[RMDB]
RNA sequence: GGGAACGACUCGAGUAGAGUCGAAAACAGCUUUGCAUGUUUGUGGCAGGCCGGAAUGUCCUGCGCGAUUCCGACAUGCAGCAGAAAACCCUUGGUGAAGUCGUGCAGCCUGAUGGUGCCUACGCCAGGGAUAUAGUGACUUCGGUCACUAUAUCCCAAAAGAAACAACAACAACAAC
Reactivity to DMS in 0.01 (KOAc 150mM, MgCl2 10mM, bicine 150mM(pH8.5), 24C), signal-to-noise 2, nucleotides 027 to 126: c110a070g020c070u000u010u020g020c020a020u000g000u000u000u000g040u000g040g020c010a010g010g010c050c060g040g000a130a150u000g000u000c020c020u000g000c020g020c060g000a130u010u010c130c110g000a020c000a020u000g000c020a040g000c050a120g010a100a080a110a170c050c000c010u010u000g010g030u000g000a140a110g000u010c080g000u010g010c030a100g010c040c030u000g020a070u000g050g030u010g010c040c020u000a090c060g000c030c060a110
Reactivity to 2A3 in 0.01 (KOAc 150mM, MgCl2 10mM, bicine 150mM(pH8.5), 24C), signal-to-noise 3, nucleotides 027 to 126: c040a010g060c030u140u280u160g000c020a040u000g090u050u100u120g100u100g080g000c000a000g000g000c020c040g110g300a300a100u300g030u080c000c030u030g000c040g030c030g160a210u200u120c040c020g020a000c000a010u010g000c000a000g000c010a020g080a010a060a010a020c010c010c020u010u040g040g000u040g030a130a060g040u090c070g000u120g080c040a060g130c010c010u160g060a140u180g010g030u000g030c020c010u020a020c040g000c020c010a020
Structure probing data (DMS and 2A3) for a 177-nucleotide construct.
For DMS, 2,027 sequencing reads were counted.
For DMS the reverse transcriptase was MarathonRT.
For 2A3 the reverse transcriptase was SuperScript II with manganese.
It was measured as part of the RMDB library OK2TST.